The record gives the reactivity of an RNA of 177 nucleotides to 2A3 and DMS.
It was measured as part of the RMDB library TTRDEL.
DMS adducts were read by reverse transcription with MarathonRT.
The reactions ran in a buffer of 150 mM KOAc, 10 mM MgCl2 and 150 mM bicine (pH 8.5), at 24 C.
RNA sequence: GGGAACGACUCGAGUAGAGUCGAAAAGAUAUGGAGGACGAUCGCGAAGAACUAGGCUAAUACUCGGAAACGAGUAUAACCUAGGGAGCGAAAGUCCUCCUAAGUCAAACCGGAGUUCGCUCCGGAACUAUUAAUGUCACUUCGGUGACAUUAAUAGAAAAGAAACAACAACAACAAC
Reactivity to 2A3 in 0.01 (KOAc 150mM, MgCl2 10mM, bicine 150mM(pH8.5), 24C), signal-to-noise 3, nucleotides 027 to 126: g020a020u070a020u130g010g000a000g000g000a000c010g010a030u000c000g010c010g170a300a060g010a040a020c000u000a000g000g000c010u040a080a050u010a060c000u000c010g020g000a040a070a040c000g010a000g000u010a000u000a010a010c000c000u000a000g020g000g000a020g010c000g010a000a000a000g000u000c010c000u000c010c000u000a000a000g000u000c010a000a030a080c000c000g010g000a010g000u130u200c220g030c200u000c000c000g000g010a000a000
Reactivity to DMS in 0.01 (KOAc 150mM, MgCl2 10mM, bicine 150mM(pH8.5), 24C), signal-to-noise 6, nucleotides 027 to 126: g000a020u020a300u010g000g000a010g000g020a020c000g000a300u000c010g010c000g000a090a190g010a130a200c000u000a000g000g010c020u000a080a060u000a000c000u000c000g000g010a100a090a200c000g010a010g010u000a000u000a040a100c010c000u000a000g000g000g000a060g010c000g000a010a050a300g000u000c000c000u000c000c010u000a000a080g010u000c030a060a100a150c000c000g010g010a030g020u000u010c280g030c010u000c000c000g010g000a020a050